[RMDB]
RNA sequence: GGGAACGACUCGAGUAGAGUCGAAAAGGGGGCCGAAGGGCUGCAAAGGUGUGUGGACCAGACAGCAGGAGCGGCAUGCGCAAUGCAUCGCCGUGCAGGUGCCGCAAUGACCGCCCGCGAGUUGGGCAGCUACGUAUCCAUUCGUGGAUACGUAGCUAAAAGAAACAACAACAACAAC
Reactivity to 2A3 in 0.01 (KOAc 150mM, MgCl2 10mM, bicine 150mM(pH8.5), 24C), signal-to-noise 1, nucleotides 027 to 126: g020g020g000g010g000c020c020g000a030a020g080g040g000c040u020g020c050a080a050a080g160g010u100g010u100g000u050g090g000a020c010c000a030g090a140c050a070g060c010a060g000g040a060g050c000g010g000c000a000u030g010c060g030c090a170a110u270g000c000a010u020c140g070c090c050g010u000g000c000a020g070g070u070g110c030c020g000c010a000a040u100g040a120c000c050g020c000c030c000g010c050g000a050g070u220u100g000g040g000c010
Reactivity to DMS in 0.01 (KOAc 150mM, MgCl2 10mM, bicine 150mM(pH8.5), 24C), signal-to-noise 3, nucleotides 027 to 126: g000g000g000g010g010c050c060g010a120a120g010g000g010c030u010g000c060a030a130a110g020g020u010g020u010g020u000g010g000a090c050c030a120g010a090c090a110g010c010a090g000g010a220g010c010g000g000c000a030u000g000c020g010c160a100a050u010g020c010a020u000c170g000c130c090g010u000g000c060a040g010g020u000g000c060c030g020c040a020a060u010g000a150c040c070g000c010c000c010g000c050g000a090g010u010u010g010g010g020c070